The record gives the reactivity of an RNA of 207 nucleotides to 2A3 and DMS. For 2A3 the reverse transcriptase was SuperScript II with manganese. Conditions: 150 mM KOAc, 10 mM MgCl2 and 150 mM bicine (pH 8.5), 24 C. DMS adducts were read by reverse transcription with MarathonRT. The DMS profile rests on 3,380 reads.
RNA sequence: GGGAACGACUCGAGUAGAGUCGAAAAAGCAAAGGGCCUGCCUCCUAAGACACAGAGUAGCUACUGUCCAGUUUGACUCUAGGUAGGAAACAUUUCUGAUCGCUUAUUCUUGGGGAAGGAGCCUGACUUUGGAGGUUUAUGUGAGCAUCCUGCAGCAUACAUGGUGAAGGUUCGCCUUCACCAUGUAAAAAGAAACAACAACAACAAC
Reactivity to 2A3 in 0.01 (KOAc 150mM, MgCl2 10mM, bicine 150mM(pH8.5), 24C), signal-to-noise 3, nucleotides 027 to 156: a000g110c130a110a100a010g020g010g050c000c050u040g020c020c020u040c010c010u100a120a010g050a050c060a020c010a080g060a000g010u110a060g050c010u070a030c030u140g070u060c020c010a040g010u040u110u200g110a060c010u010c020u060a060g010g020u020a010g080g000a000a100a000c120a060u080u110u000c040u080g070a120u110c070g010c060u030u090a050u230u110c060u080u090g020g030g010g040a090a000g020g030a020g010c040c010u020g010a050c030u040u020u030g000g000a020g000g000u050u080u070a090u100g070u030g010a020g010c000a060u050c000c010u040g040c040a010g050c010a030
Reactivity to DMS in 0.01 (KOAc 150mM, MgCl2 10mM, bicine 150mM(pH8.5), 24C), signal-to-noise 1, nucleotides 027 to 156: a130g020c050a030a080a140g030g000g020c040c010u010g030c030c030u000c010c000u000a150a070g000a150c110a090c000a110g010a110g000u000a070g030c000u000a040c020u000g000u010c040c030a160g000u000u000u000g010a130c040u010c030u010a080g000g040u000a110g000g000a120a080a060c050a170u000u000u000c040u010g000a060u000c060g030c090u020u000a110u000u000c030u010u000g000g010g030g030a130a080g030g010a100g010c000c000u010g020a070c030u000u000u000g020g010a070g030g000u000u000u010a060u000g020u000g020a060g010c040a090u020c010c000u000g000c040a130g020c090a300